Background: The record gives the reactivity of an RNA of 177 nucleotides to DMS and 2A3. The reactions ran in a buffer of 150 mM KOAc, 10 mM MgCl2 and 150 mM bicine (pH 8.5), at 24 C. It was measured as part of the RMDB library RFMREP.
RNA sequence: GGGAACGACUCGAGUAGAGUCGAAAACGUUGCAACAACCCCGUGGUUUGGGCGCAGUGGGGCAAGGUAUUUGUCCGGUGCGCAGUGAAGCCACUGCAACAAAAACAGUCAUUCUUCGGAAUGACUGCGUUCAAAUGCAGUUCGCUGCAUUUGAACGAAAAGAAACAACAACAACAAC
Reactivity to DMS in 0.01 (KOAc 150mM, MgCl2 10mM, bicine 150mM(pH8.5), 24C), signal-to-noise 1, nucleotides 027 to 126: c150g000u010u010g000c000a030a160c080a110a270c090c010c020c200g040u000g000g000u000u010u000g010g000g000c010g000c010a030g010u000g040g060g010g010c020a000a000g030g020u000a150u020u000u000g010u000c000c000g030g010u010g000c020g010c000a040g030u000g000a040a040g000c030c010a000c010u010g000c000a010a010c020a090a070a070a060a180c000a010g010u000c000a030u000u000c000u010u020c190g020g000a010a000u000g000a000c000u000g000
Reactivity to 2A3 in 0.01 (KOAc 150mM, MgCl2 10mM, bicine 150mM(pH8.5), 24C), signal-to-noise 2, nucleotides 027 to 126: c000g000u000u020g000c020a060a150c000a020a150c050c030c000c010g000u020g000g020u030u040u030g040g050g000c000g000c010a140g170u110g070g050g010g040c020a020a020g190g100u300a280u150u030u010g020u000c000c020g060g100u010g000c010g000c010a020g030u160g300a010a010g000c030c010a000c050u040g020c000a010a000c000a010a070a030a020a020c010a000g000u010c000a010u000u000c000u050u050c170g030g000a020a000u000g010a000c000u000g000